Overview
Structure probing data (2A3 and DMS) for a 177-nucleotide construct. Values cover nucleotides 27 to 126. 2A3 is a SHAPE reagent: it acylates the 2'-hydroxyl of flexible nucleotides of all four kinds. The data come from the RNA Mapping Database (RMDB), library OK2TRN. Values are in units of 0.01, from 0 to 300, in steps of 10. For 2A3, 8,467 sequencing reads were counted. Conditions: 150 mM KOAc, 10 mM MgCl2 and 150 mM bicine (pH 8.5), 24 C.
RNA sequence: GGGAACGACUCGAGUAGAGUCGAAAAUGGGACAGACUCUCCUGGCUUGAAGCUCCCAGGUGAAGGAGGCUUUGAAGAAACAGUGGGACCAGCCCCCAGCCCGCAGCCCUUCCUGGGCCUUGGUCCCGUAGUAGACUUAGUUCGCUAAGUCUACUACAAAAGAAACAACAACAACAAC
Reactivity to 2A3 in 0.01 (KOAc 150mM, MgCl2 10mM, bicine 150mM(pH8.5), 24C), signal-to-noise 5, nucleotides 027 to 126: u080g000g010g020a010c030a050g050a100c030u030c000u000c040c010u020g040g010c030u070u120g090a110a030g040c020u070c020c020c020a030g080g050u100g110a120a040g030g030a020g020g030c010u130u090u140g150a190a110g060a070a130a030c070a070g080u150g020g010g010a030c000c010a020g040c010c010c000c010c000a000g010c010c000c010g040c030a040g000c000c010c010u040u050c010c020u020g000g010g000c010c010u010u060g010g000u000c000c000c010
Reactivity to DMS in 0.01 (KOAc 150mM, MgCl2 10mM, bicine 150mM(pH8.5), 24C), signal-to-noise 1, nucleotides 027 to 126: u010g010g000g000a130c050a100g010a090c070u000c010u000c020c010u000g010g000c060u000u000g020a100a120g010c070u000c060c020c010a060g010g010u000g010a120a080g010g010a060g010g010c110u000u010u000g000a100a070g010a110a090a090c150a080g000u010g010g010g000a050c010c020a100g010c090c020c000c050c060a130g000c010c010c020g010c130a090g010c040c030c020u000u000c030c040u000g010g010g010c110c040u000u000g000g010u000c000c000c010